[RMDB]
RNA sequence: GGGAACGACUCGAGUAGAGUCGAAAAGCGGUACACUUCGGUGUACCGCAAAACCGGAAUAAACAUGGGCCCAUGAGCCGAAACGGAAGGGCGUGCGCCCAAAAACGACGCCGUUCGCGGCGUCGAAGAGUUACAUAAUCUUCGGAUUAUGUAACUCAAAAGAAACAACAACAACAAC
Reactivity to DMS in 0.01 (KOAc 150mM, MgCl2 10mM, bicine 150mM(pH8.5), 24C), signal-to-noise 4, nucleotides 027 to 126: g000c000g010g000u000a000c000a010c000u000u020c160g050g010u010g020u000a010c000c000g000c000a010a010a050a150c010c020g000g020a120a090u020a060a090a100c180a110u000g010g020g000c010c070c010a020u000g000a090g020c000c000g010a040a090a110c280g010g010a090a150g020g020g000c010g030u000g010c300g000c000c010c000a010a030a040a070a170c010g000a000c020g000c000c000g030u010u000c190g020c010g000g010c000g000u000c000g000a010a050
Reactivity to 2A3 in 0.01 (KOAc 150mM, MgCl2 10mM, bicine 150mM(pH8.5), 24C), signal-to-noise 5, nucleotides 027 to 126: g010c000g000g000u010a010c010a000c010u030u090c190g050g000u000g000u010a000c010c000g000c010a000a000a000a000c020c000g050g130a120a160u230a150a080a040c070a110u070g000g010g000c030c040c020a020u040g040a050g190c050c030g070a220a150a030c150g100g070a070a040g090g040g010c010g010u030g000c040g000c000c000c030a050a060a000a000a010c010g000a000c010g010c000c000g020u030u040c170g020c000g080g000c000g010u000c000g000a010a010